Structure probing data (DMS and 2A3) for a 207-nucleotide construct. The data come from the RNA Mapping Database (RMDB), library OK3TST. DMS (dimethyl sulfate) methylates the pairing face of unpaired adenines and cytosines. The 2A3 profile rests on 1,783 reads. Values cover nucleotides 27 to 156. The RNA was probed in 150 mM KOAc, 10 mM MgCl2 and 150 mM bicine (pH 8.5) at 24 C. For 2A3 the reverse transcriptase was SuperScript II with manganese.
RNA sequence: GGGAACGACUCGAGUAGAGUCGAAAACUCACUCACUACGGUGAGUGAGAAUGCUUAAGCCUCAAUAAAGCUUGGCUUGAGUGCCUCAAGCAGAUAUAGGCUGAAACAUUUAGCAUGGCCAAGCAGGGAGCAACGGCUCGAGUACGCUCGAGCCGAAAUUUAUUAGUCGAUUCGUCGACUAAUAAAUAAAAGAAACAACAACAACAAC
Reactivity to DMS in 0.01 (KOAc 150mM, MgCl2 10mM, bicine 150mM(pH8.5), 24C), signal-to-noise 2, nucleotides 027 to 156: c010u000c000a020c010u000c010a000c000u000a110c300g120g010u000g000a040g030u000g010a020g020a010a030u000g010c020u000u000a080a110g010c010c010u000c040a110a060u010a130a120a170g030c000u000u010g000g030c020u000u010g020a090g010u000g000c030c020u000c090a090a080g030c000a150g030a180u000a150u010a130g020g020c000u010g020a110a090a060c020a070u010u000u000a040g020c130a130u020g020g030c010c010a030a110g020c020a210g000g000g020a150g010c020a090a170c040g020g000c000u000c010g010a080g030u010a050c280g020c030u000c000g010a010g010c000c000g020a000a000
Reactivity to 2A3 in 0.01 (KOAc 150mM, MgCl2 10mM, bicine 150mM(pH8.5), 24C), signal-to-noise 2, nucleotides 027 to 156: c000u000c000a000c000u000c000a010c000u020a010c200g080g000u000g000a000g000u000g000a000g000a010a040u070g000c000u040u040a040a040g030c020c010u030c050a110a200u140a220a110a030g050c000u020u010g000g000c000u030u090g070a100g050u100g040c000c020u040c090a060a060g000c030a010g140a080u130a060u140a230g080g020c010u000g030a060a130a000c070a080u100u180u100a040g020c020a030u080g020g000c000c000a020a040g000c000a010g070g030g020a080g000c030a070a050c030g000g000c000u010c020g040a020g030u040a060c280g020c080u000c000g000a000g000c000c000g010a010a020